[RMDB]
RNA sequence: GGGAACGACUCGAGUAGAGUCGAAAAUCAAACCCGCCCUUGUAGCUCAGUGGAAGAGCGCUUCACUCGUAUUCCAAUACUGCCAUGAAGAGGUCCGCGGUUCAAUCCCGCGUGGUGGCAAAAAAAAGAUUACAUUGCAGUUCGCUGCAAUGUAAUCAAAAGAAACAACAACAACAAC
Reactivity to DMS in 0.01 (KOAc 150mM, MgCl2 10mM, bicine 150mM(pH8.5), 24C), signal-to-noise 2, nucleotides 027 to 126: u000c120a070a120a250c030c010c010g030c080c020c020u000u000g030u000a080g000c010u010c030a060g010u000g000g000a100a050g000a030g010c050g000c030u000u000c020a070c040u010c080g020u000a140u000u000c040c120a060a110u000a090c140u010g020c020c040a050u000g000a070a060g010a040g000g040u010c030c040g010c030g000g000u010u010c170a090a300u030c300c000c000g010c010g040u010g010g030u000g000g020c000a000a000a000a070a040a070a080a070
Reactivity to 2A3 in 0.01 (KOAc 150mM, MgCl2 10mM, bicine 150mM(pH8.5), 24C), signal-to-noise 1, nucleotides 027 to 126: u080c000a010a060a050c000c000c000g010c000c010c010u040u060g100u120a030g000c010u010c050a040g010u050g090g070a110a040g030a010g030c030g000c000u070u040c010a070c040u010c040g030u070a100u140u050c020c000a030a020u030a110c040u040g020c020c020a030u060g020a060a080g030a020g080g060u020c040c000g020c000g000g000u010u060c010a030a030u060c000c010c000g000c020g000u010g000g010u030g000g000c030a000a000a000a100a000a050a040a030